RNA sequence: GGGAACGACUCGAGUAGAGUCGAAAAGCGAGUACACGCAGUAUAGUGCCACUUGUGUGAGAAUACUUUUAGUACAAGCGAGUACACGCAGUAUACUGCCACUUGUGUGAGAAUACUUUUAGUACAAGGUAAUUAACACAUUCGUGUGUUAAUUACCAAAAGAAACAACAACAACAAC
Reactivity to 2A3 in 0.01 (KOAc 150mM, MgCl2 10mM, bicine 150mM(pH8.5), 24C), signal-to-noise 9, nucleotides 027 to 126: g020c010g010a010g020u130a040c060a010c070g010c010a000g000u000a000u010a020g230u010g010c010c010a000c000u020u010g010u000g020u060g110a130g100a120a060u090a090c020u090u180u160u260a060g020u050a010c020a070a020g020c020g020a020g020u090a020c070a010c080g000c010a000g010u000a000u000a010c000u010g000c010c000a010c010u040u040g030u010g040u080g080a060g080a090a070u130a130c030u050u100u070u150a090g050u080a090c060a140a030
Reactivity to DMS in 0.01 (KOAc 150mM, MgCl2 10mM, bicine 150mM(pH8.5), 24C), signal-to-noise 6, nucleotides 027 to 126: g010c030g000a020g010u020a010c060a130c300g010c020a010g000u000a010u000a020g000u000g010c030c140a020c000u010u000g000u020g000u000g000a120g000a120a160u010a030c040u010u000u010u030a110g020u000a020c030a070a220g010c030g010a020g010u010a030c090a130c300g010c040a040g010u000a010u000a010c000u000g000c000c130a010c010u000u000g000u010g000u030g000a070g030a120a050u040a040c030u000u000u010u020a110g010u030a080c210a100a150

Source information: This 177-nucleotide RNA was probed chemically with 2A3 and DMS. The data come from the RNA Mapping Database (RMDB), library OK1LIB. The RNA was probed in 150 mM KOAc, 10 mM MgCl2 and 150 mM bicine (pH 8.5) at 24 C. Reactivities are given for positions 27 through 126. For DMS the reverse transcriptase was MarathonRT.